RNA sequence: GGGAACGACUCGAGUAGAGUCGAAAACAUCUUUUGUGGUCAAGUAAUUGGAUGCGGACCACGUGCCCGUAGCGUUCAAUGCUACGACGGUUGAGACCGCAAAAGGGAUUUUUGGGCCGCGAACUGACUCGUACAGAUCUUUCGAGAUCUGUGCGAGAAAAGAAACAACAACAACAAC
Reactivity to DMS in 0.01 (KOAc 150mM, MgCl2 10mM, bicine 150mM(pH8.5), 24C), signal-to-noise 1, nucleotides 027 to 126: c090a060u030c000u000u000u020u000g030u000g000g010u010c020a110a110g030u030a020a090u020u020g000g020a130u020g000c000g000g000a040c000c050a040c190g000u040g020c030c030c000g000u000a030g040c020g000u070u040c240a100a090u030g000c010u010a010c000g000a050c060g000g000u000u010g040a300g000a020c000c000g000c000a000a000a000a000g000g010g080a300u030u010u000u010u000g020g000g000c010c000g030c010g010a040a030c030u000g000a090
Reactivity to 2A3 in 0.01 (KOAc 150mM, MgCl2 10mM, bicine 150mM(pH8.5), 24C), signal-to-noise 2, nucleotides 027 to 126: c030a020u110c000u000u020u000u000g010u000g000g000u000c010a010a030g050u070a090a130u040u040g030g020a040u110g010c000g000g020a090c010c000a020c000g010u040g000c000c000c010g000u000a000g000c000g040u080u180c120a070a030u160g010c000u000a000c010g070a020c060g000g040u060u020g080a020g000a090c000c000g000c000a000a000a000a000g100g030g060a130u020u090u100u270u280g020g020g020c000c010g010c010g010a030a010c020u020g020a030